[RMDB]
RNA sequence: GGGAACGACUCGAGUAGAGUCGAAAAGCGUACUACGUACGACAUGCUGACUAGGCUGUAGAAGGUCCCAAAUAGGACCUUCGUAGAGAGCUCAGUCAGCAACAGCGUACGUAUCGCAAAACUGCUUAUGGCGAGAUUCGUCUCGCCAUAAGCAGAACGAACCGAAGAAGUUCGCUUCUUCGGUUCGAAAAGAAACAACAACAACAAC
Reactivity to 2A3 in 0.01 (KOAc 150mM, MgCl2 10mM, bicine 150mM(pH8.5), 24C), signal-to-noise 1, nucleotides 027 to 156: g040c050g020u070a050c020u000a000c010g030u000a010c000g110a060c020a050u000g000c040u000g060a010c010u020a070g020g020c000u050g000u110a010g000a000a000g070g000u020c040c080c010a150a280a190u300a110g000g000a000c000c010u000u000c000g000u060a000g110a030g000a000g010c000u000c190a000g010u000c010a000g010c000a000a010c040a000g020c000g000u000a000c000g000u000a000u000c000g000c010a000a130a000a230c000u000g000c000u040u000a010u010g000g000c030g000a000g050a090u100u150c300g150u000c130u000c000g000c020c000a000u000a000a000g000c000a000g000a000a000
Chemical mapping of a 207-nucleotide RNA with 2A3. The data come from the RNA Mapping Database (RMDB), library RNAMAK. The RNA was probed in 150 mM KOAc, 10 mM MgCl2 and 150 mM bicine (pH 8.5) at 24 C.